Source information
Chemical mapping of a 177-nucleotide RNA with DMS and 2A3. For DMS the reverse transcriptase was MarathonRT. It was measured as part of the RMDB library OK2TRN. 2A3 adducts were read by reverse transcription with SuperScript II with manganese. For 2A3, 1,176 sequencing reads were counted.
RNA sequence: GGGAACGACUCGAGUAGAGUCGAAAACAAGCGCCCGAGGUAACCGCCUCGACCCCGAUGUGCGUGACGAGAUUGAGGCGCUCGCGCCGGGCCUUGAGACCGGCGAGGUCACGACCGACAAGAUCGCCGACAAGUAUCGUUUCGACGAUACUUGUCGAAAAGAAACAACAACAACAAC
Reactivity to DMS in 0.01 (KOAc 150mM, MgCl2 10mM, bicine 150mM(pH8.5), 24C), signal-to-noise 2, nucleotides 027 to 126: c070a120a130g010c100g000c000c080c000g020a030g020g000u020a050a040c300c280g040c000c000u000c000g000a060c080c000c000c060g000a060u020g050u020g000c030g000u000g000a090c010g020a060g010a170u010u010g020a160g010g030c000g040c010u000c300g000c020g000c010c010g020g040g010c000c030u010u010g030a240g000a030c020c010g010g010c040g000a100g010g030u000c010a040c040g000a060c040c030g000a100c070a100a070g000a170u020c090g030c100
Reactivity to 2A3 in 0.01 (KOAc 150mM, MgCl2 10mM, bicine 150mM(pH8.5), 24C), signal-to-noise 1, nucleotides 027 to 126: c020a060a000g020c000g010c050c000c000g040a010g060g050u090a300a180c120c060g020c020c000u030c000g030a040c020c030c000c020g050a070u140g010u000g080c060g010u000g040a000c040g030a000g000a190u050u160g080a090g050g010c010g000c000u020c020g040c020g020c000c000g000g000g040c010c010u170u200g080a080g010a070c000c010g000g010c010g010a010g000g020u010c040a000c040g000a100c000c000g030a020c030a030a080g050a120u130c020g030c000